[RMDB]
RNA sequence: GGGAACGACUCGAGUAGAGUCGAAAAGAAUGCAACGGCAAGAUCGUGGGAUACGUGCUUGCAAAGAUGGAGGAAGAGGCUGCUGAGACACAUGGCCACAUCACAUCUCUUGCUGUCGCUCGGACACCAGGUUGCUAGUAUUCGUACUAGCAACCUGAAAAGAAACAACAACAACAAC
Reactivity to DMS in 0.01 (KOAc 150mM, MgCl2 10mM, bicine 150mM(pH8.5), 24C), signal-to-noise 3, nucleotides 027 to 126: g020a120a070u000g010c040a040a050c060g000g000c010a020a010g000a070u000c120g020u000g020g020g010a080u000a020c090g020u000g020c040u000u000g000c030a050a080a120g000a070u000g020g010a110g020g000a070a050g010a110g000g000c030u000g030c200u000g000a130g010a120c150a080c080a070u010g010g010c010c020a050c090a080u000c050a030c050a050u000c100u000c030u000u000g010c020u000g000u000c060g000c030u010c050g000g000a090c160a120c170
Reactivity to 2A3 in 0.01 (KOAc 150mM, MgCl2 10mM, bicine 150mM(pH8.5), 24C), signal-to-noise 3, nucleotides 027 to 126: g100a050a030u130g010c020a030a010c010g000g010c020a030a000g010a040u080c070g040u060g020g060g030a050u090a190c060g020u090g030c040u040u090g010c020a060a040a000g070a060u130g040g030a090g040g060a100a070g020a040g060g030c010u040g020c050u060g070a020g060a050c040a000c010a170u100g060g000c030c000a010c010a030u090c020a010c010a050u040c030u010c000u050u020g030c000u020g020u040c020g000c010u020c030g070g020a020c020a030c130